The record gives the reactivity of an RNA of 207 nucleotides to DMS and 2A3.
RNA sequence: GGGAACGACUCGAGUAGAGUCGAAAAAGUUCACGGAUCGUUACACCAUCAAGAGUGGAACCACUUAUGAGAAAGCUGUAAGGGAUAUUCUAAAAAGUGCUGGCAUCUCGAAAAUAAACAUCGAGUUUACAGGGAACCUCAACUUGACAACUGAUAAGUUUAUGUCCAUAUUCGUAUGGACAUAAACAAAAGAAACAACAACAACAAC
Reactivity to DMS in 0.01 (KOAc 150mM, MgCl2 10mM, bicine 150mM(pH8.5), 24C), signal-to-noise 2, nucleotides 027 to 156: a080g000u010u000c050a170c030g030g000a050u000c000g000u000u000a100c070a060c030c030a160u000c100a090a250g000a150g030u000g000g020a070a040c050c000a040c060u010u000a030u020g000a050g020a160a080a070g020c030u000g020u000a070a050g000g010g010a040u000a050u000u000c060u000a060a100a050a040a040g020u010g010c010u010g010g000c040a060u000c040u000c000g020a080a070a080a100u000a080a110a090c050a200u010c020g010a030g020u000u000u000a060c050a150g010g000g010a040a090c070c030u000c050a060a060c040u030u010g010a090c040a060a130c030u020g020a000u000a050a220
Reactivity to 2A3 in 0.01 (KOAc 150mM, MgCl2 10mM, bicine 150mM(pH8.5), 24C), signal-to-noise 4, nucleotides 027 to 156: a000g070u060u050c060a020c070g030g000a050u050c020g030u070u090a060c060a050c090c020a080u100c070a130a040g050a010g030u030g010g020a030a030c010c000a030c010u060u050a040u070g030a040g050a080a050a000g000c030u040g050u170a030a030g060g000g000a050u020a060u090u060c030u070a030a010a030a020a020g030u010g010c010u010g020g020c010a040u010c020u000c020g030a030a070a030a110u140a060a140a020c050a030u030c010g000a010g000u010u040u050a030c030a000g060g000g020a010a020c000c000u040c030a010a050c020u030u060g040a030c040a080a050c100u090g060a120u080a230a040
For DMS the reverse transcriptase was MarathonRT.
It was measured as part of the RMDB library OK3TST.
The reactions ran in a buffer of 150 mM KOAc, 10 mM MgCl2 and 150 mM bicine (pH 8.5), at 24 C.